[RMDB]
This 177-nucleotide RNA was probed chemically with 2A3. The reactions ran in a buffer of 150 mM KOAc, 10 mM MgCl2 and 150 mM bicine (pH 8.5), at 24 C. The 2A3 profile rests on 542 reads.
RNA sequence: GGGAACGACUCGAGUAGAGUCGAAAAUACUGCAUAUGGUGUGGACUUCCUGGUGCCCGUGAUGGGCUAUAUCUGCCGCAUCUGCCACAAGUUCUAUCACAGCAACUCAGGGGCACAGCUCUCCCACGUUGUCGUUGGGCUUCGGCCCAACGACAACAAAAGAAACAACAACAACAAC
Reactivity to 2A3 in 0.01 (KOAc 150mM, MgCl2 10mM, bicine 150mM(pH8.5), 24C), signal-to-noise 1, nucleotides 027 to 126: u080a010c010u000g050c000a060u020a120u170g030g010u020g010u000g030g070a100c080u090u110c080c020u070g000g000u050g110c040c000c110g150u150g060a130u170g000g020g000c000u010a000u000a000u010c010u090g010c000c000g010c030a030u020c000u050g040c050c000a030c030a010a000g000u000u000c010u010a230u000c050a130c070a180g000c050a030a090c010u000c050a060g000g000g000g030c000a000c010a030g000c000u000c000u030c030c000c000a030c050

2A3 adducts were read by reverse transcription with SuperScript II with manganese.